This 207-nucleotide RNA was probed chemically with DMS and 2A3.
For DMS the reverse transcriptase was MarathonRT.
The RNA was probed in 150 mM KOAc, 10 mM MgCl2 and 150 mM bicine (pH 8.5) at 24 C.
For 2A3, 1,513 sequencing reads were counted.

[RMDB]
RNA sequence: GGGAACGACUCGAGUAGAGUCGAAAACUGGCGUGGCUGCGGGAAAAUCAGCCCGACAUCAUGACCACCGACGAAGGCCAGAAAAAGGGCUUCACGUUUUAUGCAGACAUCAACAAUGACAGCAGCUUUGAUAUCAGCAUCAGCCUGAUGCUGACCGCCCUAUUAGAAAAUUCGUUUUCUAAUAGGGAAAAGAAACAACAACAACAAC
Reactivity to DMS in 0.01 (KOAc 150mM, MgCl2 10mM, bicine 150mM(pH8.5), 24C), signal-to-noise 1, nucleotides 027 to 156: c140u000g000g020c040g090u020g000g010c020u000g000c040g000g000g000a030a070a140a200u000c080a100g020c050c040c020g040a130c080a150u000c030a140u020g010a070c000c020a140c050c020g010a150c080g020a100a290g020g000c020c020a140g010a110a100a120a150a300g020g010g020c000u000u000c060a090c100g000u000u000u000u000a130u010g040c000a170g020a010c020a080u000c070a120a020c050a110a050u050g000a140c060a070g000c050a110g000c080u020u020u030g000a140u000a070u040c020a030g010c000a060u010c020a120g020c170c200u010g000a100u040g000c000u000g040a000c040c080g000
Reactivity to 2A3 in 0.01 (KOAc 150mM, MgCl2 10mM, bicine 150mM(pH8.5), 24C), signal-to-noise 3, nucleotides 027 to 156: c020u020g020g010c040g030u020g040g010c050u030g010c030g010g000g070a050a060a040a140u180c040a070g080c000c000c010g040a050c010a040u080c010a030u070g160a250c020c020a030c060c050g070a050c080g020a110a000g030g020c000c010a020g160a090a040a010a000a050g010g000g000c000u060u060c100a090c040g010u080u000u000u060a100u110g060c020a010g060a100c010a080u070c040a040a090c010a110a170u090g040a090c040a040g030c010a010g000c020u070u070u150g110a100u120a010u150c010a000g000c000a000u000c000a010g230c030c100u110g000a000u010g000c000u000g000a010c000c010g000

Source: RMDB library OK3TST, as collected in RNAgym.